[RMDB]
RNA sequence: GGGAACGACUCGAGUAGAGUCGAAAAAGAGCUUUGCGAGACCUACCAAGGGUGAAGAGAUACCAUCCAAGGAGCUGAGGAGAAAUCUCACUUUAGACGCCUGGGGAACUCGGACUAAAUUAAAAAAAAAACAUCAACCCGUUCGCGGGUUGAUGAAGAGUUAAUUAAUGUUCGCAUUAAUUAACUCAAAAGAAACAACAACAACAAC
Reactivity to 2A3 in 0.01 (KOAc 150mM, MgCl2 10mM, bicine 150mM(pH8.5), 24C), signal-to-noise 1, nucleotides 027 to 156: a010g110a010g000c070u090u090u120g020c040g000a010g010a060c000c030u050a110c040c090a090a110g060g010g010u010g040a120a020g070a000g010a010u070a140c000c080a020u060c000c000a040a050g140g000a060g040c090u060g040a030g020g000a030g040a040a110a040u000c010u000c010a030c030u110u180u050a080g010a250c060g020c060c020u040g000g000g010g010a030a030c040u030c080g060g000a020c050u090a040a100a250u270u300a050a030a010a020a000a000a000a000a000a020c000a000u000c000a000a000c000c000c000g000u020u010c060g010c010g120g000g000u000u020g000a000u000g000a020a000